[RMDB]
The data come from the RNA Mapping Database (RMDB), library TTRDEL. The record gives the reactivity of an RNA of 177 nucleotides to DMS and 2A3. High DMS reactivity at an A or C suggests that its Watson-Crick edge is free. The DMS profile rests on 4,791 reads. DMS adducts were read by reverse transcription with MarathonRT. For 2A3 the reverse transcriptase was SuperScript II with manganese.

RNA sequence: GGGAACGACUCGAGUAGAGUCGAAAAGAUAUGGAUGGUUAAUACUGAUGACCUCCGAUCGGAAACGAUCGGAGGCAAGGUAUAACCAUCCUAAGUCAAAACAGACCAAUGUUCGCAUUGGUCUGAACCCAGAUAUUAACUUCGGUUAAUAUCUGGGAAAAGAAACAACAACAACAAC
Reactivity to DMS in 0.01 (KOAc 150mM, MgCl2 10mM, bicine 150mM(pH8.5), 24C), signal-to-noise 3, nucleotides 027 to 126: g010a010u000a120u000g000g000a010u000g010g010u000u010a050a060u000a000c000u010g020a110u010g000a200c060c000u000c000c000g000a000u000c000g010g000a040a040a050c000g010a010u000c000g010g000a000g000g000c010a000a020g000g020u000a020u000a010a010c000c000a000u000c000c000u000a000a050g000u010c010a100a070a140a250c010a020g000a010c000c000a010a000u000g010u010u010c260g030c010a010u000u000g010g000u000c000u000g000a030a090
Reactivity to 2A3 in 0.01 (KOAc 150mM, MgCl2 10mM, bicine 150mM(pH8.5), 24C), signal-to-noise 3, nucleotides 027 to 126: g020a010u020a010u070g000g000a000u010g000g020u040u050a290a090u040a200c010u060g200a190u260g060a160c000c000u010c000c000g000a000u000c000g010g000a020a030a000c010g000a010u000c010g000g020a000g000g000c000a010a030g030g000u000a000u000a000a000c000c010a000u000c000c000u000a010a000g000u000c000a010a010a100a160c000a010g000a000c000c000a000a000u020g020u060u080c240g000c180a000u000u000g000g000u010c000u000g000a000a000